[RMDB]
RNA sequence: GGGAACGACUCGAGUAGAGUCGAAAAGAUAUGGAGACCGUAACAUCGGGAGCUUGUUCGGUCGGAAACGACCGGUAGAGCGAAGAACGUGGGUCUCCUAAGUCAAACGAGUACUUCGGUACUCGAACUAUAAGAUCGGGUUCGCCCGAUCUUAUAGAAAAGAAACAACAACAACAAC
Reactivity to 2A3 in 0.01 (KOAc 150mM, MgCl2 10mM, bicine 150mM(pH8.5), 24C), signal-to-noise 3, nucleotides 027 to 126: g000a010u040a020u130g010g000a010g010a000c040c040g180u300a080a060c050a120u240c040g030g080g060a080g000c020u110u080g090u300u220c030g020g000u000c010g000g000a040a050a030c000g010a010c040c020g040g000u120a100g010a010g020c030g030a130a080g020a020a020c050g000u070g000g010g000u010c000u000c000c000u000a000a000g030u010c020a060a040a140c010g000a000g020u010a010c010u040u190c290g090g010u010a000c000u030c010g000a030a000
Reactivity to DMS in 0.01 (KOAc 150mM, MgCl2 10mM, bicine 150mM(pH8.5), 24C), signal-to-noise 4, nucleotides 027 to 126: g010a060u000a300u010g000g000a030g000a010c000c000g030u010a110a140c090a120u000c010g010g000g000a240g000c010u010u000g020u010u010c010g010g020u000c000g000g000a050a040a150c010g030a020c000c010g010g000u000a100g000a000g000c000g010a300a170g000a030a090c090g020u000g010g020g010u000c000u010c000c000u000a010a110g000u000c020a100a100a160c040g010a010g010u000a000c000u000u020c200g020g000u000a000c010u000c000g010a030a100
The record gives the reactivity of an RNA of 177 nucleotides to 2A3 and DMS.
The reactions ran in a buffer of 150 mM KOAc, 10 mM MgCl2 and 150 mM bicine (pH 8.5), at 24 C.
Values are in units of 0.01, from 0 to 300, in steps of 10.
It was measured as part of the RMDB library TTRDEL.